[RMDB]
RNA sequence: GGGAACGACUCGAGUAGAGUCGAAAAGGCUGGUGCCGGAGCCGAUACCGGAAUACGAGACCUUAUGUGCGGUCGAAUGCACUGAAGUACGAAAGUACGAAGAGGUCAAACCGAGGACCGAGACUCGAUAUGCUCGCUAGAUGGAGCUUUACAUCAACAGUACGGACUAUUUCGAUAGUCCGUACUGAAAAGAAACAACAACAACAAC
Reactivity to 2A3 in 0.01 (KOAc 150mM, MgCl2 10mM, bicine 150mM(pH8.5), 24C), signal-to-noise 2, nucleotides 027 to 156: g000g000c010u040g010g080u050g080c030c000g000g010a010g040c060c150g040a010u080a080c040c000g050g030a070a040u170a070c140g030a030g020a110c000c000u060u060a050u210g010u000g010c000g000g000u140c100g050a090a040u150g000c000a010c050u060g070a100a000g010u020a000c020g030a130a040a040g000u010a010c000g000a040a000g030a010g000g000u010c010a000a000a060c070c040g010a020g000g040a030c010c060g030a010g020a090c000u000c050g030a060u030a010u150g000c000u020c030g040c030u030a060g010a050u080g040g010a010g000c000u070u020u020a040c040a020u040c030a060a060
Reactivity to DMS in 0.01 (KOAc 150mM, MgCl2 10mM, bicine 150mM(pH8.5), 24C), signal-to-noise 1, nucleotides 027 to 156: g010g070c000u000g010g010u000g010c000c010g040g050a040g050c060c060g000a180u000a070c010c020g000g000a080a150u000a150c040g000a300g010a020c000c000u000u000a090u010g050u000g060c020g030g010u000c300g010a100a210u010g020c070a060c000u000g000a170a300g010u000a000c000g000a120a100a270g000u010a050c010g010a060a180g000a070g010g000u010c050a060a120a170c000c000g000a040g020g030a110c020c000g000a160g000a080c010u000c050g000a080u000a030u000g020c030u000c060g000c090u000a090g030a120u000g030g010a060g010c030u000u000u000a080c110a080u000c040a080a290
Background: Source: RMDB library OK3TST, as collected in RNAgym. Structure probing data (2A3 and DMS) for a 207-nucleotide construct. The DMS profile rests on 1,482 reads. For 2A3 the reverse transcriptase was SuperScript II with manganese. DMS adducts were read by reverse transcription with MarathonRT.